[RMDB]
RNA sequence: GGGAACGACUCGAGUAGAGUCGAAAAGGAGCUGUUGACCGCAGAAUAACAUUUGAUAUUGGUGUGACCCCAGGUACUGCUGUAACAAAAAAUGGAAAGCUUGACCUUGCCAUGGCUUUGAAACCAGCCAUGAGGAGUAGUUCGCUACUCCUCAUGGAAAAGAAACAACAACAACAAC
Reactivity to 2A3 in 0.01 (KOAc 150mM, MgCl2 10mM, bicine 150mM(pH8.5), 24C), signal-to-noise 2, nucleotides 027 to 126: g030g010a020g010c030u040g040u170u060g080a050c020c000g000c060a020g040a130a090u110a080a020c030a060u080u060u200g120a070u050a090u080u150g020g010u030g010u040g140a090c000c030c000c020a000g060g020u030a080c030u050g030c010u050g010u070a030a060c060a020a090a020a040a000a010u070g040g000a070a040a010g040c020u010u040g060a130c000c000u000u000g030c010c020a010u020g000g000c000u020u040u080g000a030a040a020c010c000a010g060
Reactivity to DMS in 0.01 (KOAc 150mM, MgCl2 10mM, bicine 150mM(pH8.5), 24C), signal-to-noise 3, nucleotides 027 to 126: g020g010a070g010c050u010g020u000u000g010a080c060c090g000c040a050g010a120a080u020a110a100c080a090u000u010u010g000a080u000a090u010u010g020g000u000g000u000g000a120c050c060c040c040a090g000g010u010a060c090u000g000c020u010g010u000a060a090c090a010a000a060a050a080a060u010g020g000a050a040a060g000c020u000u000g020a070c090c020u000u010g010c030c030a030u000g000g010c030u000u000u020g000a070a050a120c120c040a110g000